[RMDB]
RNA sequence: GGGAACGACUCGAGUAGAGUCGAAAAGCGUACUACGUGCCUUUUGACGUUUGGUGCAUGGAGGGAGUCCCAAAUAGGACUCCCGAUGAAAUGCACGACAAACGAUAAGGCACGUAUCGCAAACAUUACCCCAACGUUUCGACGUUGGGGUAAUGAAUCCUAUUCAUGAGUUCGCUCAUGAAUAGGAAAAAGAAACAACAACAACAAC
Reactivity to DMS in 0.01 (KOAc 150mM, MgCl2 10mM, bicine 150mM(pH8.5), 24C), signal-to-noise 1, nucleotides 027 to 156: g020c000g040u000a060c090u010a010c000g060u000g000c000c000u000u000u000u060g040a210c050g010u010u010u000g020g010u000g010c000a010u010g030g010a300g030g030g010a060g040u000c000c000c000a020a180a300u000a050g010g000a040c000u010c000c000c020g000a020u000g000a110a210a270u000g000c000a010c000g000a120c030a010a020a060c000g000a170u000a000a010g010g000c010a040c000g010u000a020u010c010g000c020a150a090a190c000a020u000u000a020c000c000c000c010a080a050c000g010u000u000u000c260g030a140c000g010u000u000g010g000g000g000u020a000a000u000g000a090a150
Reactivity to 2A3 in 0.01 (KOAc 150mM, MgCl2 10mM, bicine 150mM(pH8.5), 24C), signal-to-noise 3, nucleotides 027 to 156: g000c010g030u080a070c050u000a000c010g020u010g000c000c000u040u050u040u140g270a110c030g000u010u020u010g010g000u000g000c000a000u010g010g010a010g010g010g000a010g000u030c010c020c000a190a220a090u300a060g000g000a010c000u000c000c000c000g000a000u010g000a010a010a000u010g000c010a010c030g050a030c000a000a000a000c010g020a030u020a050a000g000g010c020a000c000g000u000a030u020c000g000c000a020a020a020c010a000u000u000a000c000c000c010c000a030a000c000g010u030u090u110c200g130a030c000g000u000u000g000g000g000g000u000a000a000u000g000a000a000